RNA sequence: GGGAACGACUCGAGUAGAGUCGAAAAGUGCCGCGGGGCACAACUGGUCGAGAGUUGGCCUGCUCUCCUGAUGAGCCCAUGGCAAGGCAAAGCCAGUGUGGUACGGUAUGGCAAGGCUUGCCUCGGAGUCAAGCGGGAGGGCUCCCGGGGCGCCGCAGGCUUGUAAUAGGUUCGCCUAUUACAAGCCAAAAGAAACAACAACAACAAC
Reactivity to 2A3 in 0.01 (KOAc 150mM, MgCl2 10mM, bicine 150mM(pH8.5), 24C), signal-to-noise 6, nucleotides 027 to 156: g030u020g010c010c020g160c060g080g000g030g020c110a060c030a260a040c070u100g030g060u150c090g070a060g000a030g290u080u170g050g030c020c000u010g030c000u000c000u010c000c000u050g060a120u080g030a060g100c020c000c000a030u070g010g000c010a010a010g070g010c010a070a030a040g000c020c000a050g020u110g040u150g220g150u230a090c120g020g050u170a100u060g030g010c030a010a070g080g050c000u020u030g000c010c010u020c110g020g010a130g040u070c040a120a080g100c010g000g010g000a010g000g000g010c000u020c000c000c000g040g030g000g000c020g000c010c010g030c070a030
Reactivity to DMS in 0.01 (KOAc 150mM, MgCl2 10mM, bicine 150mM(pH8.5), 24C), signal-to-noise 2, nucleotides 027 to 156: g030u000g040c000c000g020c060g010g020g050g030c140a070c020a000a040c060u010g030g040u000c080g030a190g050a140g040u000u000g000g020c090c030u000g030c010u010c010u000c020c000u020g000a300u010g010a110g000c030c000c010a120u000g000g010c010a080a030g030g000c020a050a210a300g010c000c000a060g000u000g030u000g000g010u000a130c100g040g050u000a070u010g000g040c030a130a300g000g020c010u000u000g010c010c000u000c020g040g010a000g030u000c030a110a100g000c070g010g000g000a070g020g010g020c040u010c010c010c020g020g010g010g020c000g040c010c020g010c090a230